[RMDB]
RNA sequence: GGGAACGACUCGAGUAGAGUCGAAAAGCUCUGCGAGACAGAUCGAACAACAAAGAGAGAUCGAAAAUCUUAGAGGAGAGAACGAAUCUGUCGACUUCACUAGGACAUUGUCGAUCAGAGGUCCAAAGACCAUUGAUGGCUUCGGCUAUCGAUGGUCAAAAGAAACAACAACAACAAC
Reactivity to DMS in 0.01 (KOAc 150mM, MgCl2 10mM, bicine 150mM(pH8.5), 24C), signal-to-noise 9, nucleotides 027 to 126: g010c020u000c000u010g010c040g000a300g000a030c040a080g000a020u000c010g010a300a240c070a070a100c280a060a130a090g000a070g010a300g000a020u000c010g010a080a070a100a200u000c000u000u000a010g000a070g000g000a010g010a120g000a150a020c020g010a090a090u030c060u030g000u000c000g000a290c000u000u010c010a090c020u000a010g000g000a020c100a080u020u010g000u000c000g000a200u010c010a030g000a030g000g000u010c010c000a040a070a110
Reactivity to 2A3 in 0.01 (KOAc 150mM, MgCl2 10mM, bicine 150mM(pH8.5), 24C), signal-to-noise 9, nucleotides 027 to 126: g020c000u000c000u010g020c030g010a020g000a010c000a010g010a030u020c010g060a060a060c030a060a010c040a020a300a010g100a020g010a000g000a010u010c010g030a040a040a020a050u000c000u000u010a010g000a030g030g010a000g010a000g020a050a020c010g020a050a130u120c110u150g020u010c020g060a120c000u010u000c000a010c020u010a000g010g010a010c010a130u070u120g030u010c000g000a010u030c000a000g010a000g010g040u000c000c000a020a030a010
Source: RMDB library OK1LIB, as collected in RNAgym.
An RNA of 177 nucleotides, treated with DMS and 2A3 and read out base by base.
For DMS, 40,251 sequencing reads were counted.
For 2A3 the reverse transcriptase was SuperScript II with manganese.
DMS adducts were read by reverse transcription with MarathonRT.
The RNA was probed in 150 mM KOAc, 10 mM MgCl2 and 150 mM bicine (pH 8.5) at 24 C.